[RMDB]
RNA sequence: GGGAACGACUCGAGUAGAGUCGAAAAGAUAUGGAGCUCCCAUGGGAGGUGGUCGGAAACGACCAUACCUUUGAUCAUGGAGCUCCUAAGUCAAAUCGAUACACGGGGUUCGCCCCGUGUAUCGAAACUACGAUGUACGGUUCGCCGUACAUCGUAGAAAAGAAACAACAACAACAAC
Reactivity to 2A3 in 0.01 (KOAc 150mM, MgCl2 10mM, bicine 150mM(pH8.5), 24C), signal-to-noise 1, nucleotides 027 to 126: g020a000u100a070u140g000g010a010g020c020u130c060c130c030a010u010g000g080g000a020g000g000u020g020g040u000c000g000g050a040a020a080c000g000a010c000c010a020u100a030c010c020u150u110u090g130a110u160c010a030u070g030g000a000g000c010u000c000c010u020a030a010g000u020c030a040a010a220u020c000g000a000u000a000c000a000c000g050g000g000g040u030u070c230g230c040c000c010c000g070u010g000u000a010u020c000g000a000a000a000
Reactivity to DMS in 0.01 (KOAc 150mM, MgCl2 10mM, bicine 150mM(pH8.5), 24C), signal-to-noise 1, nucleotides 027 to 126: g020a030u000a300u010g000g000a010g040c000u000c150c070c120a020u000g010g000g030a030g030g020u000g000g020u000c000g000g000a080a100a140c000g000a010c000c000a000u010a020c000c000u000u010u010g010a120u000c020a040u000g010g010a050g000c010u000c010c000u000a020a050g000u000c030a080a130a120u000c010g020a030u000a020c000a000c000g010g010g000g000u000u000c290g000c010c000c000c010g040u000g000u010a000u000c020g000a000a040a120
Structure probing data (2A3 and DMS) for a 177-nucleotide construct. For 2A3, 2,297 sequencing reads were counted. For 2A3 the reverse transcriptase was SuperScript II with manganese. The DMS profile rests on 1,416 reads. Source: RMDB library TTRDEL, as collected in RNAgym.